Chemical mapping of a 177-nucleotide RNA with DMS and 2A3. Source: RMDB library OK1LIB, as collected in RNAgym. Values cover nucleotides 27 to 126. The RNA was probed in 150 mM KOAc, 10 mM MgCl2 and 150 mM bicine (pH 8.5) at 24 C.
RNA sequence: GGGAACGACUCGAGUAGAGUCGAAAAGAGCUAAUAUCUACUUCGUUUGUGCAUAUCACGUUCAAGCCUAUAGGGAAGCUGAUGGGUUGCGAGAAAUCGCAGUGCCUAGUGGAAUGAACGGCUCGAAGGGUUAUGUAAUCUUCGGAUUACAUAACCCAAAAGAAACAACAACAACAAC
Reactivity to DMS in 0.01 (KOAc 150mM, MgCl2 10mM, bicine 150mM(pH8.5), 24C), signal-to-noise 3, nucleotides 027 to 126: g000a000g020c040u020a080a140u070a070u000c010u040a020c100u000u000c170g030u000u000u000g000u000g030c140a060u030a120u030c150a190c050g000u030u020c020a030a040g020c000c040u000a140u000a150g010g000g030a100a080g000c050u010g000a120u020g010g010g020u020u000g010c000g030a060g010a120a080a080u000c000g010c000a000g030u020g000c000c030u000a040g030u000g000g010a070a020u030g010a050a050c150g000g010c000u010c070g000a080a090
Reactivity to 2A3 in 0.01 (KOAc 150mM, MgCl2 10mM, bicine 150mM(pH8.5), 24C), signal-to-noise 4, nucleotides 027 to 126: g000a020g010c040u090a090a050u060a130u230c050u060a060c030u030u040c040g120u040u080u100g080u060g000c020a050u080a030u230c050a030c030g050u090u050c040a060a010g010c000c010u050a010u060a100g050g020g020a040a060g020c030u070g040a050u090g020g070g000u050u030g000c000g000a040g000a050a080a050u000c000g000c000a020g030u070g060c000c000u040a030g000u010g000g020a050a070u060g050a060a010c020g010g000c000u010c010g040a110a040